This 177-nucleotide RNA was probed chemically with DMS and 2A3. For 2A3 the reverse transcriptase was SuperScript II with manganese. Reactivities are given for positions 27 through 126. The DMS profile rests on 1,426 reads. The reactions ran in a buffer of 150 mM KOAc, 10 mM MgCl2 and 150 mM bicine (pH 8.5), at 24 C.
[RMDB]
RNA sequence: GGGAACGACUCGAGUAGAGUCGAAAACGGCCGCGGGCGUCUCGGUGUGGCUCGACGACCUGUCCCGUGAGCGGAUCGAGUCCGGCAACCUCGCCGACCUGAUCGCCACCCGCAGCGUCGUCGGUGAGGCUACCUACGUCUUCGGACGUAGGUAGCCAAAAGAAACAACAACAACAAC
Reactivity to DMS in 0.01 (KOAc 150mM, MgCl2 10mM, bicine 150mM(pH8.5), 24C), signal-to-noise 1, nucleotides 027 to 126: c080g000g000c040c010g020c070g010g010g030c040g000u010c020u010c060g010g020u010g000u010g010g000c030u010c000g010a040c000g000a030c040c030u000g060u010c040c040c100g010u000g020a190g020c000g030g020a000u010c040g010a060g000u000c060c040g020g030c060a110a160c200c190u000c100g020c000c000g000a060c010c070u010g000a010u010c010g000c000c030a060c010c060c110g020c030a060g000c090g020u000c030g010u000c030g010g010u010g000a160
Reactivity to 2A3 in 0.01 (KOAc 150mM, MgCl2 10mM, bicine 150mM(pH8.5), 24C), signal-to-noise 1, nucleotides 027 to 126: c050g020g060c020c040g000c030g050g030g000c000g090u020c040u040c060g000g060u120g030u080g030g060c060u060c040g020a030c040g030a030c000c000u030g020u130c020c010c000g010u010g010a090g000c150g000g040a020u000c020g020a030g010u030c220c150g000g000c020a070a190c090c080u180c100g050c000c000g030a020c010c040u020g010a030u020c000g000c000c000a030c000c010c020g000c040a010g000c050g060u000c000g000u000c010g000g000u090g020a060